Structure probing data (DMS and 2A3) for a 177-nucleotide construct. Source: RMDB library OK2TRN, as collected in RNAgym.

RNA sequence: GGGAACGACUCGAGUAGAGUCGAAAACAUCAACUAUCAGCCUCCAACAGUGGUUCCUGGUGGAGAUCUGGCCAAAGUACAGAGAGCCGUGUGCAUGUUGAGCAACACCACAGCUAUCGCUGAGGCCACGACUCAUAUAGUUCGCUAUAUGAGUCGUAAAAGAAACAACAACAACAAC
Reactivity to DMS in 0.01 (KOAc 150mM, MgCl2 10mM, bicine 150mM(pH8.5), 24C), signal-to-noise 9, nucleotides 027 to 126: c060a100u010c100a080a090c130u010a100u020c100a090g010c190c000u000c010c010a040a070c110a050g010u010g010g000u010u000c090c010u000g010g000u000g010g010a040g010a070u000c050u010g010g020c020c010a030a220a040g020u000a090c150a140g000a050g000a030g010c000c030g030u000g010u010g010c140a090u000g010u000u010g010a140g020c140a060a050c030a050c080c020a030c030a030g010c010u000a060u000c040g010c010u000g000a300g000g000c020c040
Reactivity to 2A3 in 0.01 (KOAc 150mM, MgCl2 10mM, bicine 150mM(pH8.5), 24C), signal-to-noise 7, nucleotides 027 to 126: c020a080u170c060a010a110c060u150a110u270c050a040g070c010c000u000c010c010a030a020c010a040g060u150g130g150u180u120c010c010u030g030g000u000g000g010a020g000a030u020c040u050g000g000c000c010a050a060a000g030u060a100c080a080g040a000g000a000g050c010c030g030u040g020u050g040c140a180u080g060u050u110g200a180g070c070a010a020c010a000c010c020a010c000a010g000c000u020a010u080c030g000c020u000g010a010g020g000c000c010

Conditions: 150 mM KOAc, 10 mM MgCl2 and 150 mM bicine (pH 8.5), 24 C. 2A3 adducts were read by reverse transcription with SuperScript II with manganese. Values cover nucleotides 27 to 126.